[RMDB]
RNA sequence: GGGAACGACUCGAGUAGAGUCGAAAAGAUAUGGAGUGGAGCGAUAAGUCUGUGCUCGGAAACGAGCAUUUGUAGACUUUUGACGCUCCCUCCUAAGUCAAAACGUAGGAACUUCGGUUCCUACGAACUUAACCGUAACCUUCGGGUUACGGUUAAGAAAAGAAACAACAACAACAAC
Reactivity to 2A3 in 0.01 (KOAc 150mM, MgCl2 10mM, bicine 150mM(pH8.5), 24C), signal-to-noise 2, nucleotides 027 to 126: g020a020u070a030u130g000g040a000g120u300g020g000a000g000c010g020a080u060a280a000g010u000c010u030g010u040g000c000u030c000g020g000a030a040a010c000g000a000g000c060a020u090u080u230g180u110a030g020a010c020u070u050u110u060g080a020c030g000c010u000c000c020c000u000c000c000u000a000a010g000u000c020a080a010a010a130c020g010u000a020g000g000a010a000c000u050u040c300g120g000u030u000c000c010u000a010c000g000a020a000
Reactivity to DMS in 0.01 (KOAc 150mM, MgCl2 10mM, bicine 150mM(pH8.5), 24C), signal-to-noise 2, nucleotides 027 to 126: g000a020u000a240u010g000g000a030g000u020g040g000a010g020c000g000a090u000a020a020g020u000c000u000g040u000g000c000u000c000g000g000a030a080a130c000g000a020g010c000a020u000u010u010g040u030a020g020a010c000u010u000u000u000g010a210c050g000c000u000c000c000c000u010c000c000u000a000a050g000u000c030a110a040a080a180c000g030u000a000g000g000a010a010c000u000u010c260g040g000u000u000c000c000u000a000c000g000a030a060
Structure probing data (2A3 and DMS) for a 177-nucleotide construct. Values cover nucleotides 27 to 126. The DMS profile rests on 2,179 reads. Conditions: 150 mM KOAc, 10 mM MgCl2 and 150 mM bicine (pH 8.5), 24 C.